[RMDB]
RNA sequence: GGGAACGACUCGAGUAGAGUCGAAAAGCAUAUCUCGUGAGAGAUAUGCAAGCCACGUCUUCGGACGUGGCACCAAGGUACUACGGUACCUUGGAACUAUUCAUCUACGGAUGAAUAGAGCUCGAAUCGUGAGAUUCGAGCAAAACAAAAGAAAAAAAAUGACAAGCAAAAACAAAAAUACAACAAUUAAGCCCCGAUGGACGGACCGCGAGGACCGUCAAGCCUAGCAGGUACCUUCGGGUGGGGCCUUGCGAUACCUGCGGGCAACGUGGACGUUCGCGUCCACGAAAAGAAACAACAACAACAAC
Reactivity to 2A3 in 0.01 (KOAc 150mM, MgCl2 10mM, bicine 150mM(pH8.5), 24C), signal-to-noise 2, nucleotides 027 to 266: g000c000a000u000a000u000c000u000c000g010u110g080a200g020a000g000a000u000a000u000g010c000a000a000g040c000c000a000c000g020u000c010u090u070c270g100g000a000c000g000u000g000g060c000a010c020c010a000a000g000g020u010a010c000u050a030c300g110g000u010a000c020c000u000u000g000g000a000a020c000u000a000u010u010c000a010u000c000u010a030c300g160g000a000u000g000a000a000u010a000g070a070g000c010u000c000g010a010a000u000c000g030u020g080a070g000a080u040u000c010g010a000g000c050a000a060a000a000c080a030a050a020a010g170a150a100a030a040a020a020a030a030u160g080a060c100a040a040g110c050a040a110a080a130a050c190a070a190a150a070a020u250a100c110a300a010c030a050a180u240u220a220a050g020c090c020c000c010g180a110u100g060g010a010c020g030g030a010c010c010g010c020g080a090g000g010a000c010c000g000u030c020a000a000g000c000c000u000a000g020c030a000g000g000u020a020c000c000u070u120c120g030g010g010u010g000g020g010g000c010c000u010u160g040c050g000a010u040a000c000c000u000g010c000g000g000g020c010a000a010
Structure probing data (2A3) for a 307-nucleotide construct. Values cover nucleotides 27 to 266. For 2A3, 1,972 sequencing reads were counted. The RNA was probed in 150 mM KOAc, 10 mM MgCl2 and 150 mM bicine (pH 8.5) at 24 C. It was measured as part of the RMDB library POS240.